[RMDB]
RNA sequence: GGGAACGACUCGAGUAGAGUCGAAAACUUGUCCCCACCGUGGUGCCGAGGGGGGCAAGCCGCAGUAACAGCGGUCCGUAAGGGCCGGAAAACUGAAAAAUAAAGUGUCGGGUAGGGUUUGGUAGGCGCAGAAAUAAAGGUUCGCCUUUAUUUCUGCAAAAGAAACAACAACAACAAC
Reactivity to DMS in 0.01 (KOAc 150mM, MgCl2 10mM, bicine 150mM(pH8.5), 24C), signal-to-noise 2, nucleotides 027 to 126: c040u000u010g000u000c010c010c010c000a030c060c060g010u020g030g010u000g080c060c030g010a200g010g020g010g000g010g000c000a000a010g030c050c050g050c030a030g000u010a010a170c290a040g000c000g010g020u000c000c000g030u030a090a180g040g010g000c010c000g000g000a010a010a020a020c010u020g000a020a050a080a100a130u010a060a070a110g010u010g010u010c040g020g000g020u000a030g010g000g000u020u000u000g000g010u000a080g000g000c190